[RMDB]
RNA sequence: GGGAACGACUCGAGUAGAGUCGAAAAUACUAUCUGCUGUUAAAGUAACCACAGAUGAAACAGAAAAAUCUCCAACUGCCAGUACUCCAGUAAACAUAUGCAGAUACAAUCCUGCAGUAGACAAUGGAUUCCAACACCUAUUCGUAGGUGUUGGAAUAAAAGAAACAACAACAACAAC
Reactivity to 2A3 in 0.01 (KOAc 150mM, MgCl2 10mM, bicine 150mM(pH8.5), 24C), signal-to-noise 1, nucleotides 027 to 126: u050a010c050u040a000u050c010u010g000c000u010g010u040u080a260a230a160g080u040a000a160c030c050a050c030a000g020a000u060g080a060a070a040c030a020g040a040a160a030a000a060u040c050u000c010c020a100a070c030u000g050c030c000a010g000u020a070c040u000c030c000a020g010u080a060a060a050c040a050u170a060u130g000c000a000g000a030u080a210c040a000a070u110c000c020u010g000c010a010g020u140a010g010a000c060a080a020u140g100g000
Reactivity to DMS in 0.01 (KOAc 150mM, MgCl2 10mM, bicine 150mM(pH8.5), 24C), signal-to-noise 2, nucleotides 027 to 126: u000a080c110u000a050u000c020u000g010c010u000g000u000u010a060a100a120g000u000a060a130c080c120a050c030a080g000a050u000g010a090a130a050c100a070g000a000a100a030a150a060u020c090u000c030c050a040a080c060u000g000c030c040a110g000u000a070c050u000c030c050a080g020u020a010a050a070c100a060u000a050u020g010c030a030g000a130u010a070c240a090a130u010c090c000u010g020c060a020g020u020a110g000a080c120a070a080u000g010g000
The data come from the RNA Mapping Database (RMDB), library OK2TRN. This 177-nucleotide RNA was probed chemically with 2A3 and DMS. For 2A3, 1,011 sequencing reads were counted. 2A3 adducts were read by reverse transcription with SuperScript II with manganese. The reactions ran in a buffer of 150 mM KOAc, 10 mM MgCl2 and 150 mM bicine (pH 8.5), at 24 C. DMS adducts were read by reverse transcription with MarathonRT.